[RMDB]
RNA sequence: GGGAACGACUCGAGUAGAGUCGAAAAUGUAAAUCUGCCGUCAUCGACUUCGAAGGUUCGAUUCGAGCGCAGCGAGAAAGCGUUGCCGUAGGCAACGACCCGAAGGGCGAAGCGCGCAGCGCUGAGUCCAUGUAACUAGGUUCGCCUAGUUACAUGGAAAAGAAACAACAACAACAAC
Reactivity to 2A3 in 0.01 (KOAc 150mM, MgCl2 10mM, bicine 150mM(pH8.5), 24C), signal-to-noise 6, nucleotides 027 to 126: u140g020u040a040a080a090u040c010u020g020c040c020g050u050c010a120u020c010g010a020c040u060u030c040g090a180a090g180g020u150u080c020g040a140u030u030c030g000a030g040c080g000c040a020g010c030g020a060g130a100a100a010g080c010g000u010u010g020c050c030g160u130a110g000g090c030a010a030c010g040a050c000c010c000g040a060a050g030g020g000c020g010a020a000g010c020g000c040g000c050a020g010c020g000c030u040g040a020g060u000
Reactivity to DMS in 0.01 (KOAc 150mM, MgCl2 10mM, bicine 150mM(pH8.5), 24C), signal-to-noise 8, nucleotides 027 to 126: u010g020u010a080a090a130u010c020u010g010c020c030g010u010c050a100u000c010g000a170c080u000u000c070g010a110a190g010g010u010u010c050g010a100u000u000c040g010a140g010c110g020c060a040g000c100g010a140g000a070a110a090g010c010g010u000u000g010c010c020g000u010a090g040g020c020a020a030c020g000a050c020c000c010g000a060a080g010g000g000c020g010a110a100g010c010g010c060g020c140a060g020c110g010c030u000g000a230g000u000